The data come from the RNA Mapping Database (RMDB), library OK2TST. The record gives the reactivity of an RNA of 177 nucleotides to 2A3 and DMS. The 2A3 profile rests on 20,255 reads. For DMS the reverse transcriptase was MarathonRT. The RNA was probed in 150 mM KOAc, 10 mM MgCl2 and 150 mM bicine (pH 8.5) at 24 C. For DMS, 25,817 sequencing reads were counted. Reactivities are rounded to 0.1 and cut off at 0 and 3.
RNA sequence: GGGAACGACUCGAGUAGAGUCGAAAAGUGAUUUCAAGGUGUGGUAAGACAGGAUGUGUACCCAGGCCCAGCUGACUCCAGAGGCCACUCUCAAUAUUUCAUAGCACAUUGCUUCUCAGGAAACAGGGUUUACAUCCUAAUUCGUUAGGAUGUAAACAAAAGAAACAACAACAACAAC
Reactivity to 2A3 in 0.01 (KOAc 150mM, MgCl2 10mM, bicine 150mM(pH8.5), 24C), signal-to-noise 8, nucleotides 027 to 126: g040u020g020a110u050u070u100c060a070a040g040g010u050g020u030g040g040u070a070a020g060a060c030a030g040g050a080u070g030u020g020u130a060c000c020c010a020g060g000c010c010c000a020g010c020u040g030a060c020u020c050c010a020g030a050g100g000c020c010a030c010u010c000u010c020a090a040u060a100u130u120u080c050a050u070a040g020c020a030c030a120u010u110g010c020u060u030c020u010c020a040g060g110a060a090a050c050a050g170g000
Reactivity to DMS in 0.01 (KOAc 150mM, MgCl2 10mM, bicine 150mM(pH8.5), 24C), signal-to-noise 9, nucleotides 027 to 126: g020u010g010a090u010u000u000c080a100a120g010g010u000g020u000g010g000u010a050a080g010a090c100a070g000g010a060u010g020u000g020u000a090c050c030c040a120g010g000c040c020c040a090g010c070u000g000a090c060u000c050c040a070g010a100g010g010c040c060a040c070u000c040u000c060a060a090u010a080u000u000u000c070a060u000a080g010c040a060c100a070u010u000g010c050u000u000c020u000c050a130g010g010a060a050a070c130a080g010g010